[RMDB]
RNA sequence: GGGAACGACUCGAGUAGAGUCGAAAACACGACGAUAUGGACAACAAUGACUGAUUACGGAAUGCAAACGGCGAUGCAAUGUGCCUUGUCACUCAUGUACGUCAAUGGACAUUUCGAAAUACCAGAGACGAUGACCUUUAAAAACAAAACACCGUCAUACAUAUGGAGCAUUCGUGCUCCAUAUGUAAAAAGAAACAACAACAACAAC
Reactivity to 2A3 in 0.01 (KOAc 150mM, MgCl2 10mM, bicine 150mM(pH8.5), 24C), signal-to-noise 5, nucleotides 027 to 156: c050a010c030g100a010c060g020a040u040a050u180g040g020a030c010a110a000c010a070a180u090g050a080c040u070g020a050u060u070a040c030g020g010a030a000u040g010c030a040a080a010c060g010g010c030g090a100u030g000c010a030a070u080g020u030g030c040c050u090u120g100u160c000a010c010u070c040a110u060g020u040a030c010g010u000c000a020a050u040g020g050a070c030a050u020u030u050c050g030a030a020a010u130a060c030c010a020g020a010g020a080c010g030a030u030g040a020c000c000u070u120u140a120a180a020a020a010c070a010a050a030a000c040a020c030c030g070u080c020a000
Reactivity to DMS in 0.01 (KOAc 150mM, MgCl2 10mM, bicine 150mM(pH8.5), 24C), signal-to-noise 3, nucleotides 027 to 156: c060a170c060g020a070c050g030a100u000a110u000g030g010a200c040a100a080c040a080a060u000g030a130c050u010g020a090u000u000a200c040g020g030a060a050u000g010c070a090a160a110c270g010g010c060g030a080u000g000c010a080a060u000g010u010g000c020c160u000u040g000u000c020a070c040u000c030a110u000g020u000a050c060g040u000c010a060a180u000g010g010a050c030a060u000u000u010c030g020a050a070a120u020a100c040c030a030g010a300g000a080c000g040a020u000g010a050c080c040u000u000u010a020a150a090a110a080c050a010a080a060a080c030a040c030c000g000u000c020a250
Chemical mapping of a 207-nucleotide RNA with 2A3 and DMS. 2A3 adducts were read by reverse transcription with SuperScript II with manganese. The reactions ran in a buffer of 150 mM KOAc, 10 mM MgCl2 and 150 mM bicine (pH 8.5), at 24 C. The 2A3 profile rests on 3,151 reads. DMS adducts were read by reverse transcription with MarathonRT.